Chemical mapping of a 170-nucleotide RNA with DMS and 2A3. The 2A3 profile rests on 41,745 reads. Source: RMDB library 15KLIB, as collected in RNAgym.
RNA sequence: GGGAACGACUCGAGUAGAGUCGAAAACACCUUGCAUGCUGGGGACGAAGCCGCCCCCGGGCGCUCCCCUCGAUACGCCUUCGAGGGGGUUCACACCUCCAGUCGGCGGGCCGGCUACUCUUCUUUCACACCAGAUGGUUCGCCAUCUGGAAAAGAAACAACAACAACAAC
Reactivity to DMS in 0.01 (KOAc 150mM, MgCl2 10mM, bicine 150mM(pH8.5), 24C), signal-to-noise 6, nucleotides 027 to 129: c140a140c050c020u050u100g000c080a100u000g040c080u040g000g020g010g020a040c030g000a140a100g030c040c000g000c000c010c030c000c080g040g030g000c100g020c070u080c020c010c020c000u020c030g020a020u040a140c270g000c120c100u000u010c000g010a020g040g020g000g000g000u000u010c080a110c140a200c050c040u000c040c030a030g010u020c000g040g050c100g030g010g050c100c000g040g060c030u000a060c090u040c030u000u000c050u000u070u050c030a080c160a160
Reactivity to 2A3 in 0.01 (KOAc 150mM, MgCl2 10mM, bicine 150mM(pH8.5), 24C), signal-to-noise 9, nucleotides 027 to 129: c100a060c000c020u050u190g040c050a070u090g030c030u040g010g000g010g010a030c040g080a100a020g030c050c010g000c010c010c000c000c010g020g000g000c030g030c020u090c000c000c010c010u000c000g020a020u060a110c140g100c070c070u010u010c000g000a060g000g000g010g010g000u040u050c020a060c010a030c030c020u060c030c010a050g050u040c010g010g010c040g020g000g010c090c050g020g000c010u040a060c020u030c000u110u030c000u030u110u070c060a090c030a040